[RMDB]
RNA sequence: GGGAACGACUCGAGUAGAGUCGAAAACCUAUAUAUACGGCUAACCACCCAAGAGAGUAGAAGUCGUCCCUUUAUGGGCUCAAAUUUAGAACGAUAUAGUAAAGCUUAUUGCCAAAGACUUAAACUAUAGUCUUAAUUACUUCGGUAAUUAAGACUAAAAAGAAACAACAACAACAAC
Reactivity to DMS in 0.01 (KOAc 150mM, MgCl2 10mM, bicine 150mM(pH8.5), 24C), signal-to-noise 5, nucleotides 027 to 126: c000c010u010a060u010a060u030a070u040a060c050g000g000c030u000a070a110c090c050a080c010c010c030a090a150g000a110g010a060g000u010a070g010a120a040g020u010c020g020u000c000c010c000u000u010u010a040u020g000g000g010c060u010c080a050a070a070u010u030u010a100g010a070a070c090g000a080u010a050u010a030g010u000a080a070a070g000c020u000u010a040u010u020g000c060c070a060a070a060g000a060c050u010u010a030a080a080c080u010a070
Reactivity to 2A3 in 0.01 (KOAc 150mM, MgCl2 10mM, bicine 150mM(pH8.5), 24C), signal-to-noise 8, nucleotides 027 to 126: c000c000u000a000u000a000u010a000u020a050c020g010g000c010u020a030a070c030c010a040c030c040c050a150a020g110a020g020a020g080u110a020g030a130a010g030u020c000g010u010c010c000c010u030u110u040a090u080g020g000g000c010u010c030a120a160a100u140u210u120a060g020a100a050c080g040a040u060a010u020a130g060u070a040a050a010g020c020u040u040a060u100u250g050c020c020a060a060a010g020a130c010u040u090a110a060a000c010u020a020
Chemical mapping of a 177-nucleotide RNA with DMS and 2A3. 2A3 is a SHAPE reagent: it acylates the 2'-hydroxyl of flexible nucleotides of all four kinds. The RNA was probed in 150 mM KOAc, 10 mM MgCl2 and 150 mM bicine (pH 8.5) at 24 C. In probing experiments dimethyl sulfate is read out at A N1 and C N3, which are open when not base-paired.